[RMDB]
RNA sequence: GGGAACGACUCGAGUAGAGUCGAAAACGGAAGGAUUAAAACCAUUCGAGCUAGUCAAUGCGUGGCGUGUCUCUCCGCAGCGUGUUGGCGAAUGUAAAGAGUGACUAAGCAUGUAGUACCGAGGAUGAUAAGAGCAAUUCGUUCGCGAAUUGCUCAACAACGUUUGGAACUUCGGUUCCAAACGUUGAAAAGAAACAACAACAACAAC
Reactivity to 2A3 in 0.01 (KOAc 150mM, MgCl2 10mM, bicine 150mM(pH8.5), 24C), signal-to-noise 2, nucleotides 027 to 156: c050g000g030a060a000g020g000a020u050u100a100a020a020a110c060c020a030u080u110c060g010a030g040c060u060a010g040u020c000a020a010u040g010c010g030u050g120g030c010g000u050g050u030c010u000c020u000c070c010g010c010a030g000c000g000u020g020u030u010g000g000c000g000a000a010u080g010u070a040a020a020g040a000g000u020g010a020c010u050a050a020g020c030a060u090g050u070a030g050u050a050c050c050g030a040g000g040a040u090g020a020u080a190a140g000a000g000c000a000a000u000u000c010g020u010u050c090g010c010g130a010a000u010u000g000c000u010c000a010a000
Reactivity to DMS in 0.01 (KOAc 150mM, MgCl2 10mM, bicine 150mM(pH8.5), 24C), signal-to-noise 1, nucleotides 027 to 156: c080g000g000a070a090g000g020a170u010u010a030a130a080a140c040c010a070u010u020c020g000a120g000c000u000a190g020u010c030a030a050u000g000c000g080u000g030g030c010g030u010g050u010c050u000c010u000c170c010g080c030a070g030c030g040u010g000u010u020g020g020c080g010a050a060u020g050u000a050a080a090g000a140g030u020g010a110c040u000a040a150g020c080a060u000g020u010a110g020u010a060c000c000g000a140g050g010a120u010g030a130u020a030a210g000a050g020c010a020a020u020u000c020g000u000u000c260g050c000g000a010a020u000u000g020c010u020c000a010a050
Chemical mapping of a 207-nucleotide RNA with 2A3 and DMS. 2A3 adducts were read by reverse transcription with SuperScript II with manganese.